[RMDB]
RNA sequence: GGGAACGACUCGAGUAGAGUCGAAAAUCGAGCCGGCCAACCGCGUCAUCCAUCCCGGCCCAGGGGUCACCGAUGUCGGCCAACCGGCUGGGCACGGUGGCCAUGGUGAACACCGCCGGGUCGCAGCGGAUUAAAGAAGAUUCGUCUUCUUUAAUCCAAAAGAAACAACAACAACAAC
Reactivity to DMS in 0.01 (KOAc 150mM, MgCl2 10mM, bicine 150mM(pH8.5), 24C), signal-to-noise 9, nucleotides 027 to 126: u010c050g010a090g010c020c020g010g000c040c060a100a090c060c050g010c080g010u000c070a070u000c040c070a110u010c030c020c010g000g010c030c020c030a120g010g010g020g010u000c010a010c010c010g010a090u000g020u000c020g000g000c010c000a100a140c240c300g000g010c000u000g010g030g010c000a020c010g000g010u000g010g000c010c010a010u010g000g000u000g010a070a080c130a100c080c070g010c020c010g000g000g000u000c040g010c200a100g000c200
Reactivity to 2A3 in 0.01 (KOAc 150mM, MgCl2 10mM, bicine 150mM(pH8.5), 24C), signal-to-noise 6, nucleotides 027 to 126: u110c020g010a010g060c020c010g010g030c040c020a030a030c040c020g020c010g060u050c010a080u030c040c010a060u040c010c000c000g020g000c010c000c010a160g100g090g000g010u000c000a010c000c010g230a250u030g020u050c010g020g000c010c020a070a210c130c130g000g000c010u020g020g030g000c010a000c010g010g000u010g000g000c000c000a000u010g000g010u060g070a110a030c070a030c070c030g010c010c010g020g020g020u010c040g000c040a050g050c030